[RMDB]
RNA sequence: GGGAACGACUCGAGUAGAGUCGAAAAGAUAUGGACCCAGGUGGAGGGCAACAGCAAGGCUCGGAAACGAGCCUUGACAUGCCUGACACCAGGGUCCUAAGUCAAACCCGUUAGUUCGCUAACGGGAGUUAGUAAUACACUUCGGUGUAUUACUAACAAAAGAAACAACAACAACAAC
Reactivity to DMS in 0.01 (KOAc 150mM, MgCl2 10mM, bicine 150mM(pH8.5), 24C), signal-to-noise 7, nucleotides 027 to 126: g010a050u010a300u000g000g010a020c000c000c000a050g050g030u000g010g000a300g010g000g010c010a020a100c300a200g010c010a030a010g000g010c000u010c000g010g000a080a130a250c000g010a000g010c010c000u000u000g020a020c070a210u000g010c000c000u000g010a300c010a010c010c000a030g000g000g000u000c000c000u000a000a070g010u000c040a050a150a240c000c000c000g010u000u000a000g010u000u010c250g000c010u000a000a000c000g000g000g000a030
Reactivity to 2A3 in 0.01 (KOAc 150mM, MgCl2 10mM, bicine 150mM(pH8.5), 24C), signal-to-noise 5, nucleotides 027 to 126: g020a030u080a050u140g000g000a000c000c010c030a020g000g000u020g020g010a040g000g010g010c020a080a060c050a230g090c000a020a010g000g000c000u000c020g020g030a070a090a040c020g000a000g000c000c020u000u010g010a020c010a010u070g000c000c010u010g020a000c000a000c000c000a000g010g000g000u000c010c000u010a050a000g040u010c040a070a060a140c010c010c000g000u000u000a000g010u020u070c300g000c280u010a010a000c000g010g000g010a010